[RMDB]
RNA sequence: GGGAACGACUCGAGUAGAGUCGAAAAGCGUACUACUCGGAGGUUAAAGAGGUGUACAGUCUUAUCCCAAAUAGGAUAAGACGUACACUACCCACCUUUAACUACCCACCCGAGUAUCGCAAACAUACGAUGUUGCGUUCGCGCAACAUCGUAUGAAUCAUUCUGUGACGUUCGCGUCACAGAAUGAAAAAGAAACAACAACAACAAC
Reactivity to 2A3 in 0.01 (KOAc 150mM, MgCl2 10mM, bicine 150mM(pH8.5), 24C), signal-to-noise 2, nucleotides 027 to 156: g000c000g040u120a070c010u000a010c000u030c010g000g030a030g000g020u000u010a000a000a000g030a010g030g000u000g010u010a050c150a080g000u010c000u010u000a020u050c000c020c010a190a290a120u280a090g000g000a000u000a000a000g010a000c010g000u000a000c010a000c000u060a060c030c030c000a100c010c000u010u000u000a030a020c010u110a140c040c080c050a100c020c000c020g010a000g010u020a050u300c020g000c020a050a040a020c000a000u000a000c000g000a000u000g000u000u010g000c000g000u020u090c300g000c000g000c100a000a000c000a000u010c000g000u000a000u000g000a000a010
Reactivity to DMS in 0.01 (KOAc 150mM, MgCl2 10mM, bicine 150mM(pH8.5), 24C), signal-to-noise 1, nucleotides 027 to 156: g000c020g010u010a110c090u000a000c000u000c000g000g000a300g040g010u000u000a010a010a040g000a160g000g030u000g000u010a000c010a100g010u000c000u000u000a000u010c000c000c030a060a130a270u030a090g010g010a020u010a010a010g040a020c020g010u000a000c000a040c000u000a000c060c000c020a300c130c000u010u010u010a010a010c000u010a070c000c020c030a300c140c010c000g000a060g020u010a030u000c010g030c030a130a060a300c000a010u000a000c040g010a030u010g000u010u030g000c000g000u000u000c300g040c080g040c010a010a030c010a010u000c000g010u000a000u000g000a070a120